[RMDB]
RNA sequence: GGGAACGACUCGAGUAGAGUCGAAAAGAUAUGGAUGAUUCCGAUAAGCUGCAUUCGGAAACGAAUGACAGCUUUUGACGGAAGAGUCCUAAGUCAAAACUUGGACCGUCUUCGGACGGUCCAAGAAGUAUAUAGCAAACUUCGGUUUGCUAUAUACAAAAGAAACAACAACAACAAC
Reactivity to 2A3 in 0.01 (KOAc 150mM, MgCl2 10mM, bicine 150mM(pH8.5), 24C), signal-to-noise 1, nucleotides 027 to 126: g000a000u060a020u050g010g000a000u030g000a030u000u000c000c010g000a060u110a260a030g000c000u020g060c020a000u030u000c000g040g010a070a050a030c000g010a000a000u020g080a080c010a020g010c000u000u010u020u050g000a000c020g000g000a010a020g000a010g000u000c000c000u010a070a020g020u020c020a030a010a130a190c010u000u000g020g020a000c010c020g040u000c020u060u120c300g090g020a020c000g170g000u000c000c000a000a000g000a000a000
Reactivity to DMS in 0.01 (KOAc 150mM, MgCl2 10mM, bicine 150mM(pH8.5), 24C), signal-to-noise 4, nucleotides 027 to 126: g010a030u000a260u000g010g000a020u000g000a300u000u000c000c000g000a110u010a010a010g030c000u000g010c000a010u000u000c000g010g000a040a050a110c000g010a010a010u010g000a110c000a010g000c000u000u000u000u000g000a260c050g000g000a020a010g000a300g000u010c010c000u000a020a090g000u010c010a100a080a070a200c010u000u000g010g010a010c000c010g000u000c010u000u010c200g010g000a010c010g000g010u010c000c000a000a000g000a020a090